Source information:
Chemical mapping of a 177-nucleotide RNA with DMS and 2A3. The reactions ran in a buffer of 150 mM KOAc, 10 mM MgCl2 and 150 mM bicine (pH 8.5), at 24 C. For DMS, 8,112 sequencing reads were counted.
RNA sequence: GGGAACGACUCGAGUAGAGUCGAAAAGAUAUGGACACCCCUACGAGCUGGUGUCGGAAACGACACACAGCGAUGAGUAGAAGUGUCCUAAGUCAAACCUGUUCUAGCGUUCGCGCUAGAACAGGAACCCAUCAUAAAGGUUCGCCUUUAUGAUGGGAAAAGAAACAACAACAACAAC
Reactivity to DMS in 0.01 (KOAc 150mM, MgCl2 10mM, bicine 150mM(pH8.5), 24C), signal-to-noise 4, nucleotides 027 to 126: g000a020u000a050u000g000g000a010c000a010c000c070c110c010u000a010c010g010a210g040c000u000g000g020u010g010u000c000g020g000a020a020a040c010g020a000c000a000c010a110c010a000g010c000g010a070u010g020a300g010u000a010g000a050a040g010u000g010u000c000c000u000a000a070g000u000c010a110a160a210c000c000u000g000u000u000c000u000a010g010c000g020u010u020c290g030c000g030c000u010a000g010a000a000c000a000g000g000a030a060
Reactivity to 2A3 in 0.01 (KOAc 150mM, MgCl2 10mM, bicine 150mM(pH8.5), 24C), signal-to-noise 5, nucleotides 027 to 126: g000a000u020a010u070g000g000a000c000a000c000c060c020c000u010a010c040g300a040g020c000u000g000g000u000g010u000c000g000g010a020a020a000c000g020a000c010a010c130a030c010a040g020c020g060a220u200g130a030g000u010a010g000a140a030g000u000g000u000c000c000u000a030a000g020u000c040a110a070a200c000c000u010g000u000u000c000u000a010g010c010g040u060u060c300g010c000g000c180u000a000g000a010a000c000a010g000g000a000a000
For 2A3 the reverse transcriptase was SuperScript II with manganese.